[RMDB]
RNA sequence: GGGAACGACUCGAGUAGAGUCGAAAAGAUAUGGAAAUCCGAAGAGCGAUAAGACUGAUUUCGGAAACGAAAUAGUCUUUUGACGCUUGUAGAUUUCCUAAGUCAAAUCGCGCACUUCGGUGCGCGACUAGAACACAUGGUUCGCCAUGUGUUCUAGAAAAGAAACAACAACAACAAC
Reactivity to DMS in 0.01 (KOAc 150mM, MgCl2 10mM, bicine 150mM(pH8.5), 24C), signal-to-noise 5, nucleotides 027 to 126: g010a040u000a300u000g000g000a020a010a010u000c020c060g020a150a220g000a010g010c000g010a130u000a010a020g000a030c000u010g010a030u000u000u010c000g010g000a060a060a110c010g000a010a010a000u000a020g000u010c000u000u000u000u000g010a210c110g010c000u000u000g010u020a130g020a020u000u000u000c000c000u010a030a100g000u000c020a060a130a210u000c010g010c000g000c010a010c000u000u020c220g020g020u000g010c000g020c000g000a010